[RMDB]
RNA sequence: GGGAACGACUCGAGUAGAGUCGAAAAUCCAAUAAUUCCUUUGAUGUUUCCCAGCCAGGGAUGGUCUUCCUCUAGCUUCUUGAUUUUCUUCUUUUCCUUCCGGAGGUCUUUCUCGAGAUCCUCAGCUUUUUUCCUUGCGCUCACCCACUUCUCGAGGGAACAGGAAAUUGUUCGCAAUUUCCUGUUCAAAAGAAACAACAACAACAAC
Reactivity to 2A3 in 0.01 (KOAc 150mM, MgCl2 10mM, bicine 150mM(pH8.5), 24C), signal-to-noise 1, nucleotides 027 to 156: u000c010c020a020a070u210a090a080u120u130c040c000u090u050u160g070a050u080g070u080u110u040c020c000c000a010g060c030c020a050g000g000g040a020u040g010g010u000c040u110u020c010c000u000c040u040a040g010c000u090u070c000u070u040g030a080u080u100u080u090c000u040u040c020u070u120u040u060c020c000u070u130c040c050g040g030a010g050g010u020c080u020u130u000c030u040c000g010a010g010a080u050c020c000u020c000a010g040c000u180u050u000u010u030u150c020c070u010u060g000c000g050c030u030c030a080c000c010c000a030c000u050u040c050u020c040g010a020g020g050